[RMDB]
RNA sequence: GGGAACGACUCGAGUAGAGUCGAAAAGGAUGCAACGUAGUCAUAAGGGACAUUGCUCGCUCUUGAAUGUCCCAUGACUAGUCGUGGUUUGAGACAAGAGCGAGCUCGAGUUACGACAUCUGUAUCGCUACUACUUUCUAUUCGUAGAGAGUAGUAGAAAAGAAACAACAACAACAAC
Reactivity to 2A3 in 0.01 (KOAc 150mM, MgCl2 10mM, bicine 150mM(pH8.5), 24C), signal-to-noise 9, nucleotides 027 to 126: g030g010a010u020g010c020a060a040c080g060u060a060g010u020c010a030u060a130a150g070g010g020a020c030a090u030u130g010c010u000c020g010c010u020c010u040u090g110a160a050u090g060u040c000c020c000a000u000g000a000c010u040a040g070u020c010g010u020g020g030u050u080u150g110a060g000a010c040a060a010g010a010g030c010g000a010g000c000u000c010g050a060g020u030u020a020c030g040a040c030a030u030c030u040g030u020a030u040c020g000
Reactivity to DMS in 0.01 (KOAc 150mM, MgCl2 10mM, bicine 150mM(pH8.5), 24C), signal-to-noise 9, nucleotides 027 to 126: g010g000a020u000g010c020a060a080c230g010u000a040g010u000c020a090u010a120a120g010g000g010a070c080a110u010u000g010c010u000c010g010c010u000c010u000u000g010a070a140u010g000u000c050c000c000a010u000g010a020c050u010a090g020u000c020g030u000g000g000u000u000u000g000a090g000a240c040a030a030g000a020g010c010g000a020g010c000u000c040g000a070g000u000u000a030c030g000a090c020a070u000c070u000g010u000a070u000c060g010

An RNA of 177 nucleotides, treated with 2A3 and DMS and read out base by base. Values cover nucleotides 27 to 126. It was measured as part of the RMDB library OK2TRN. DMS adducts were read by reverse transcription with MarathonRT.